An RNA of 177 nucleotides, treated with 2A3 and read out base by base. The reactions ran in a buffer of 150 mM KOAc, 10 mM MgCl2 and 150 mM bicine (pH 8.5), at 24 C.
RNA sequence: GGGAACGACUCGAGUAGAGUCGAAAACGAGCAACCGCAGCUGCGAGGUGUGGUCGAAGAUGUCAUGCACCAUCAGCGGGCCACGGCUGUAGGGAGAGAUCACGAAGCAGGGCACGCGAUAGCCCAGCCGCAUGCUCCCGUUCGCGGGAGCAUGCGGAAAAGAAACAACAACAACAAC
Reactivity to 2A3 in 0.01 (KOAc 150mM, MgCl2 10mM, bicine 150mM(pH8.5), 24C), signal-to-noise 1, nucleotides 027 to 126: c260g000a090g000c000a000a060c100c040g000c000a000g000c000u100g010c040g110a020g020g000u000g000u000g060g100u040c120g070a160a190g020a130u060g080u110c070a030u030g030c040a000c030c000a110u000c010a000g300c070g060g020g000c000c040a000c000g000g000c000u000g060u080a170g000g000g010a000g000a000g000a090u050c000a000c180g000a000a060g000c030a090g000g000g000c040a000c000g130c060g140a050u120a000g030c040c010c000a000g050